[RMDB]
RNA sequence: GGGAACGACUCGAGUAGAGUCGAAAACGCAGAGGGUUCUGAUAACAAAGAACCUAGAUAGCCGCAUCGGUAUUAUAGGAUGUAGUCGGUGAGCCGGAAUCCCUGCAUCGUAAGCCUAUAAGUAAAUUUAAGUGUAAUCACUUCGGUGAUUACACAAGGUAAGUAUCUGGUUCGCCAGAUACUUACCAAAAGAAACAACAACAACAAC
Reactivity to DMS in 0.01 (KOAc 150mM, MgCl2 10mM, bicine 150mM(pH8.5), 24C), signal-to-noise 1, nucleotides 027 to 156: c120g000c030a090g020a180g020g000g010u010u050c010u010g000a170u010a070a190c300a110a280a060g010a040a000c030c000u000a030g010a170u000a180g000c070c040g030c070a060u000c070g020g000u000a050u000u000a070u000a080g000g000a030u000g020u020a080g050u020c000g020g030u010g000a080g030c030c010g050g040a250a060u010c030c000c000u000g000c030a070u000c030g010u010a020a130g020c070c070u000a090u010a020a140g000u000a040a070a160u000u000u000a100a140g000u000g020u000a020a000u000c000a000c010u020u030c230g020g030u000g000a020u000u000a010c000a000c000a020a030
Reactivity to 2A3 in 0.01 (KOAc 150mM, MgCl2 10mM, bicine 150mM(pH8.5), 24C), signal-to-noise 3, nucleotides 027 to 156: c070g020c020a040g040a090g050g020g000u010u010c000u030g040a100u080a170a090c030a060a180a030g030a010a010c020c000u030a020g010a040u050a000g090c030c010g070c120a070u130c050g060g000u060a030u110u070a080u090a080g060g030a040u100g040u130a050g110u070c020g000g030u060g030a010g050c010c000g020g010a020a040u030c010c000c020u010g030c010a050u040c030g080u050a070a010g000c020c000u080a080u030a160a070g120u150a080a110a160u160u220u120a150a030g000u000g000u010a000a000u000c000a000c000u040u050c150g050g000u000g010a000u000u000a010c000a020c000a000a010